[RMDB]
Structure probing data (2A3 and DMS) for a 177-nucleotide construct. High DMS reactivity at an A or C suggests that its Watson-Crick edge is free. Reactivities are given for positions 27 through 126. The reactions ran in a buffer of 150 mM KOAc, 10 mM MgCl2 and 150 mM bicine (pH 8.5), at 24 C.
RNA sequence: GGGAACGACUCGAGUAGAGUCGAAAAGAUAUGGAAUGGGACAUGCUGCAGAGGGUCGGAAACGACCCGAUCAGCAACAGCCACAUUCCUAAGUCAAAACAACCCUUAAGUUCGCUUAAGGGUUGAACGUAUCUAACAUGUUCGCAUGUUAGAUACGAAAAGAAACAACAACAACAAC
Reactivity to 2A3 in 0.01 (KOAc 150mM, MgCl2 10mM, bicine 150mM(pH8.5), 24C), signal-to-noise 6, nucleotides 027 to 126: g020a010u070a040u170g000g000a000a000u000g000g000g030a040c060a110u090g000c010u020g000c070a030g020a050g050g010g000u000c000g010g020a070a070a060c010g010a000c000c010c000g000a010u000c010a000g020c000a010a010c010a010g040c000c000a300c000a130u000u010c000c000u010a110a030g040u020c040a010a030a110a150c010a000a010c010c000c000u000u000a030a020g020u050u140c300g040c180u000u000a000a000g000g000g010u000u000g000a000a000
Reactivity to DMS in 0.01 (KOAc 150mM, MgCl2 10mM, bicine 150mM(pH8.5), 24C), signal-to-noise 9, nucleotides 027 to 126: g000a040u000a300u010g000g000a010a010u000g000g000g010a020c030a250u000g010c010u010g010c190a030g020a300g000g010g010u000c000g010g000a090a080a200c000g000a010c000c000c000g000a040u000c030a030g010c000a020a030c190a110g010c000c000a040c000a010u000u000c000c000u000a040a090g000u010c040a080a080a110a260c010a010a010c000c000c000u000u000a010a010g000u000u020c290g010c000u000u000a000a010g000g000g010u000u000g000a020a090